[RMDB]
RNA sequence: GGGAACGACUCGAGUAGAGUCGAAAAGAUAUGGAGAUCUUCAGGACAUGAAGAUGUAUCGGAAACGAUACGCUUCAACAGCCUGAGAUCUCCUAAGUCAAAAGUCCUCCAGUUCGCUGGAGGACAACUCUCACAUUUAGUUCGCUAAAUGUGAGAGAAAAGAAACAACAACAACAAC
Reactivity to 2A3 in 0.01 (KOAc 150mM, MgCl2 10mM, bicine 150mM(pH8.5), 24C), signal-to-noise 8, nucleotides 027 to 126: g000a000u020a010u090g020g000a000g010a000u020c050u300u210c190a020g030g010a070c120a300u240g010a020a030g260a300u110g000u000a010u000c000g000g000a030a000a000c000g000a000u000a010c000g000c020u020u010c020a190a230c130a200g040c000c000u000g000a000g000a000u000c000u000c000c000u000a010a000g000u000c010a010a010a060a170g010u000c000c000u000c000c000a000g020u090u150c280g090c150u000g000g000a000g000g000a000c000a000a000
Reactivity to DMS in 0.01 (KOAc 150mM, MgCl2 10mM, bicine 150mM(pH8.5), 24C), signal-to-noise 6, nucleotides 027 to 126: g000a010u000a280u010g000g010a010g010a000u000c000u010u010c020a010g010g010a070c150a170u010g010a030a000g000a070u010g030u000a010u010c010g010g000a050a040a110c000g020a010u000a010c000g000c000u000u000c000a060a090c260a220g010c000c000u000g000a020g000a010u000c000u000c000c000u000a010a060g000u000c020a100a130a150a140g010u000c000c000u010c000c000a000g000u000u010c300g030c000u000g000g010a020g000g000a000c000a010a040